[RMDB]
RNA sequence: GGGAACGACUCGAGUAGAGUCGAAAAUCUAACUUCUUCGGAAGUUAGAAAAUAAAAUCAGCGGUAAAUAUCGAGGCGUUAUUACCGCUGAACGCCUCGAUAAAAGAUUGUGCUUCGGCACAAUCAAGAAUACAUCAAGGUUCGCCUUGAUGUAUUCAAAAGAAACAACAACAACAAC
Reactivity to 2A3 in 0.01 (KOAc 150mM, MgCl2 10mM, bicine 150mM(pH8.5), 24C), signal-to-noise 5, nucleotides 027 to 126: u010c000u000a000a000c000u010u000c000u040u030c160g110g000a000a000g000u000u000a000g000a010a010a000a000u090a000a030a000a060u070c020a010g030c010g080g060u080a100a120a090u080a080u030c010g010a010g020g000c010g010u010u010a050u090u110a060c010c000g000c020u010g000a000a000c000g000c000c000u000c000g000a010u040a030a080a000a010g000a000u000u000g000u000g000c010u030u070c220g100g000c000a000c010a010a000u000c000a000a010
Reactivity to DMS in 0.01 (KOAc 150mM, MgCl2 10mM, bicine 150mM(pH8.5), 24C), signal-to-noise 5, nucleotides 027 to 126: u000c000u000a000a000c000u000u000c000u000u020c160g020g000a010a010g000u000u000a000g000a010a030a080a080u010a060a050a090a080u010c040a030g020c030g010g000u010a070a090a130u010a010u000c000g010a010g000g000c010g010u000u000a040u000u010a100c030c030g010c020u000g000a010a010c020g010c000c000u000c010g000a020u000a020a060a090a120g000a000u000u000g010u000g010c000u000u010c190g020g000c000a010c000a000a000u000c000a070a090

Source: RMDB library M2PK50, as collected in RNAgym. This 177-nucleotide RNA was probed chemically with 2A3 and DMS. The reactions ran in a buffer of 150 mM KOAc, 10 mM MgCl2 and 150 mM bicine (pH 8.5), at 24 C. The 2A3 profile rests on 13,306 reads. For DMS the reverse transcriptase was MarathonRT. Values cover nucleotides 27 to 126.